Record summary:
An RNA of 207 nucleotides, treated with 2A3 and read out base by base. The 2A3 profile rests on 727 reads. The RNA was probed in 150 mM KOAc, 10 mM MgCl2 and 150 mM bicine (pH 8.5) at 24 C.
RNA sequence: GGGAACGACUCGAGUAGAGUCGAAAAGAACUUUGGCCGGCUCGGAAUAGAAUCAGGGGGUGCAAACUGCCCACUCGCAGAAAGGAUUAUAGCAAAUGCGUACCCUAUUGCAAUACAGCCCGGCCAACAUAGACUACUCUAUUCGUAGAGUAGUCAACUGUCGUUAGAGUUUCGACUCUAACGACAGAAAAGAAACAACAACAACAAC
Reactivity to 2A3 in 0.01 (KOAc 150mM, MgCl2 10mM, bicine 150mM(pH8.5), 24C), signal-to-noise 2, nucleotides 027 to 156: g020a060a000c040u030u010u040g010g000c000c000g010g010c020u060c140g010g070a090a080u120a130g030a040a040u200c090a120g000g000g000g000g000u030g000c010a040a130a100c070u040g000c040c000c000a030c020u050c000g000c020a050g130a110a020a040g050g020a010u100u160a090u200a140g040c030a020a100a100u040g010c020g020u070a070c000c010c010u030a100u030u100g080c040a050a100u030a080c020a020g050c020c000c040g000g000c010c000a000a000c000a000u050a010g030a000c010u000a000c000u000c000u000a020u030u040c230g080u100a010g000a000g010u000a000g000u000c000a000a000